RNA sequence: GGGAACGACUCGAGUAGAGUCGAAAAAGCUUCUUGCCGCGGAAAACGUGACCCGAAAUCGACUGUCGAUGCUGCUCGGGCACGUUGACCGAAUAUAAGCCGAGCCGCACUCUGGAGGGUCGCGAGCCCACUAAUACGAGUUCGCUCGUAUUAGUGGAAAAGAAACAACAACAACAAC
Reactivity to 2A3 in 0.01 (KOAc 150mM, MgCl2 10mM, bicine 150mM(pH8.5), 24C), signal-to-noise 9, nucleotides 027 to 126: a000g020c030u060u030c030u100u120g070c040c040g040c030g030g010a020a030a010a010c000g010u030g210a300c010c000c000g040a060a060a030u060c030g070a110c210u230g080u290c050g020a030u050g060c090u070g080c040u020c000g020g010g000c010a010c010g000u000u010g010a010c000c000g010a040a010u180a020u040a080a010g020c020c030g020a020g030c020c010g020c020a020c010u030c010u050g080g090a100g040g010g020u020c020g000c010g030a060g020c000
Reactivity to DMS in 0.01 (KOAc 150mM, MgCl2 10mM, bicine 150mM(pH8.5), 24C), signal-to-noise 7, nucleotides 027 to 126: a140g000c060u000u010c090u010u000g030c100c180g010c030g000g000a060a080a030a020c000g010u000g000a110c000c010c000g010a010a110a040u010c050g010a300c180u040g020u020c040g020a030u000g020c150u030g010c160u000c000g000g010g000c010a020c030g010u010u000g010a190c050c020g000a090a080u030a090u030a070a070g010c040c040g010a120g000c090c030g000c030a030c020u020c040u010g010g010a290g010g000g000u000c030g000c060g010a300g010c060
Structure probing data (2A3 and DMS) for a 177-nucleotide construct.
The RNA was probed in 150 mM KOAc, 10 mM MgCl2 and 150 mM bicine (pH 8.5) at 24 C.
Reactivities are given for positions 27 through 126.
The DMS profile rests on 14,020 reads.
For 2A3 the reverse transcriptase was SuperScript II with manganese.